[RMDB]
RNA sequence: GGGAACGACUCGAGUAGAGUCGAAAAGCGUCGAGACCGUAGUGCUGACGAUAGCGACGAACGAGCGGGUGAUCGGCAAUUGACGAAUCGAAAUCAAUUGCCGGGAGCUGGGCACGCAGGGCAUCAGCGCGGAUGCAAGCUUCGGCUUGCAUCCGCGAAAAGAAACAACAACAACAAC
Reactivity to DMS in 0.01 (KOAc 150mM, MgCl2 10mM, bicine 150mM(pH8.5), 24C), signal-to-noise 1, nucleotides 027 to 126: g010c000g040u010c030g010a050g000a180c040c040g020u000a090g030u000g040c100u000g000a060c030g000a030u000a010g000c010g000a060c070g030a080a090c090g000a090g000c070g000g020g010u000g010a240u000c050g030g000c000a030a050u000u000g000a010c070g020a100a100u000c300g000a030a070a120u000c030a000a000u000u010g000c000c000g000g010g080a180g050c000u000g010g000g000c030a110c040g000c070a120g000g000g020c120a040u000c090a100g000